[RMDB]
RNA sequence: GGGAACGACUCGAGUAGAGUCGAAAAGAGUGCUCGAAGGUGCGCGUCCCGCACGGACGAAAAAGUCUGCUUACCAGACGUAAGAAAAAGCAACGAUAGGUUGCCUAUCAAAUAAGAGCACGAGAAAGGGUAAGUUUGACUUCGGUCAAACUUACCCAAAAGAAACAACAACAACAAC
Reactivity to 2A3 in 0.01 (KOAc 150mM, MgCl2 10mM, bicine 150mM(pH8.5), 24C), signal-to-noise 1, nucleotides 027 to 126: g050a000g000u000g000c000u000c000g030a120a030g040g020u040g000c080g000c110g010u070c040c030c000g030c000a080c030g030g050a000c020g150a050a010a010a010a010g000u000c000u000g060c100u120u150a020c090c000a000g000a040c020g070u020a070a020g190a030a000a010a000a010g000c030a000a020c120g130a170u140a230g130g120u050u050g030c010c010u090a070u060c010a010a000a040u110a000a000g000a000g000c000a000c000g000a040g170a040a070a000
Reactivity to DMS in 0.01 (KOAc 150mM, MgCl2 10mM, bicine 150mM(pH8.5), 24C), signal-to-noise 2, nucleotides 027 to 126: g010a220g010u000g000c000u000c000g000a100a090g000g030u010g020c050g010c080g000u040c060c060c030g000c040a060c280g000g000a080c020g000a160a050a040a010a100g000u000c000u000g000c230u060u000a080c220c000a010g000a000c050g000u000a050a200g000a040a020a080a230a170g020c030a000a070c000g010a100u000a100g000g000u040u000g000c010c000u000a200u010c000a110a030a090u000a040a130g000a000g000c000a000c000g000a120g000a130a110a040